[RMDB]
RNA sequence: GGGAACGACUCGAGUAGAGUCGAAAAUGCAUGAGUUCAUCUUGGUCUAGGAUUGUUGGAGGAGUCAGAAAAAUUACCCCAGGGAUCCUGAAGUCAUUGGGGUGGAAAACAAGCGGUUCGCCGCUUGCUUAUAUCUCUGGUUCGCCAGAGAUAUAAGAAAAGAAACAACAACAACAAC
Reactivity to 2A3 in 0.01 (KOAc 150mM, MgCl2 10mM, bicine 150mM(pH8.5), 24C), signal-to-noise 1, nucleotides 027 to 126: u100g000c050a050u070g060a000g110u040u050c000a040u000c030u030u070g050g000u060c070u040a030g000g080a150u090u110g100u110u040g010g040a040g030g010a030g050u070c050a050g240a080a050a010a040a060u150u100a080c010c000c000c000a000g010g000g010a050u100c010c040u090g000a050a010g040u000c000a050u020u100g000g000g010g050u040g010g030a020a060a000a020c000a000a010g010c010g000g040u010u060c180g040c050c000g000c010u000u000g000
Reactivity to DMS in 0.01 (KOAc 150mM, MgCl2 10mM, bicine 150mM(pH8.5), 24C), signal-to-noise 4, nucleotides 027 to 126: u010g010c050a040u010g010a090g010u000u000c050a060u000c040u000u000g010g000u000c040u000a080g010g010a080u010u000g000u010u010g010g010a110g000g010a110g010u000c060a070g010a050a040a060a110a110u010u000a060c010c000c000c000a040g010g000g010a020u000c060c100u000g010a090a150g010u010c050a050u000u000g010g000g010g020u000g000g000a070a080a070a200c010a000a010g010c000g000g000u000u020c250g010c010c000g000c000u000u000g000

Source: RMDB library RFMREP, as collected in RNAgym.
This 177-nucleotide RNA was probed chemically with 2A3 and DMS.
Conditions: 150 mM KOAc, 10 mM MgCl2 and 150 mM bicine (pH 8.5), 24 C.